[RMDB]
RNA sequence: GGGAACGACUCGAGUAGAGUCGAAAACACCAUUCUCUAAGCGAUGAGAAGCGUGUGGAAAAUUAGGGAAGGGCUACGGCUAUAAUCCUAAGAAAGCUUAUCUACAAGCGGAGGUAUUCUCAGAACGAAAACCAUUUGGCGUUCGCGCCAAAUGGAAGAAUAUAACUCAGUUCGCUGAGUUAUAUUCAAAAGAAACAACAACAACAAC
Reactivity to 2A3 in 0.01 (KOAc 150mM, MgCl2 10mM, bicine 150mM(pH8.5), 24C), signal-to-noise 6, nucleotides 027 to 156: c040a010c010c000a070u060u010c020u010c020u050a190a150g070c050g090a080u080g010a060g010a060a030g090c060g020u080g010u070g050g020a060a090a060a090u070u040a040g010g000g030a050a050g080g010g000c020u050a010c140g030g000c000u000a030u050a180a060u070c010c010u020a020a020g050a050a060a000g010c020u040u050a040u120c060u110a080c050a090a040g020c010g040g030a040g020g030u060a090u110u030c030u000c020a060g040a140a040c060g050a070a040a050a080c000c000a000u000u000u000g000g000c000g010u040u050c200g010c000g000c060c000a000a000a000u000g000g000a010a000
Reactivity to DMS in 0.01 (KOAc 150mM, MgCl2 10mM, bicine 150mM(pH8.5), 24C), signal-to-noise 3, nucleotides 027 to 156: c020a070c010c010a100u000u000c010u000c010u000a120a170g050c110g010a300u000g000a050g020a030a070g000c110g030u000g010u000g000g010a080a070a100a130u000u000a030g010g010g020a120a140g010g000g010c030u000a090c150g070g000c000u000a080u000a060a120u010c000c030u020a070a070g020a090a050a150g010c090u000u000a050u010c080u000a090c070a040a060g000c030g000g020a050g030g030u000a100u000u000c010u000c030a080g000a100a100c070g000a090a080a100a180c010c000a030u000u010u000g020g010c040g040u000u020c300g040c000g060c000c000a000a000a000u000g020g000a010a030

Record summary:
Structure probing data (2A3 and DMS) for a 207-nucleotide construct. For 2A3 the reverse transcriptase was SuperScript II with manganese. The 2A3 profile rests on 5,824 reads. Source: RMDB library M2RFPK, as collected in RNAgym.